RNA sequence: GGGAACGACUCGAGUAGAGUCGAAAAAGAUUUCUUCGACACAAGGGCACUAUGGAACAUCAAGAACUCUCUAACAUAUGCAGAUGUGAAUAAGAUAAUGGAAGCAACAUCUAAGUGUAGAAUGUCAAUUAUCUUUAGGUUUCGACCUAAAGAUAAUAAAAGAAACAACAACAACAAC
Reactivity to DMS in 0.01 (KOAc 150mM, MgCl2 10mM, bicine 150mM(pH8.5), 24C), signal-to-noise 9, nucleotides 027 to 126: a080g010a140u000u000u000c020u000u010c080g020a100c070a070c090a080a090g000g000g000c030a040c060u000a060u010g010g000a080a070c090a060u010c070a070a070g010a090a070c090u000c040u000c030u010a080a100c070a050u000a050u000g010c150a040g000a040u000g020u010g010a070a080u010a060a070g000a070u000a050a070u000g010g010a080a070g010c090a060a050c050a020u000c030u000a060a090g020u000g020u000a050g010a070a070u000g020u000c080a090
Reactivity to 2A3 in 0.01 (KOAc 150mM, MgCl2 10mM, bicine 150mM(pH8.5), 24C), signal-to-noise 8, nucleotides 027 to 126: a000g050a010u040u050u020c020u050u070c040g050a020c000a010c020a100a070g040g020g000c020a010c030u040a050u100g040g040a060a040c010a060u080c030a040a020g040a080a050c010u010c010u000c020u090a080a020c010a080u080a030u200g040c040a010g010a100u040g030u020g040a060a070u150a140a020g060a050u110a120a080u150g060g020a060a020g040c030a020a020c000a010u010c010u070a080a060g050u010g010u050a030g040a120a040u060g030u060c020a020

Chemical mapping of a 177-nucleotide RNA with DMS and 2A3. 2A3 adducts were read by reverse transcription with SuperScript II with manganese. Reactivities are rounded to 0.1 and cut off at 0 and 3. The reactions ran in a buffer of 150 mM KOAc, 10 mM MgCl2 and 150 mM bicine (pH 8.5), at 24 C. The 2A3 profile rests on 14,098 reads.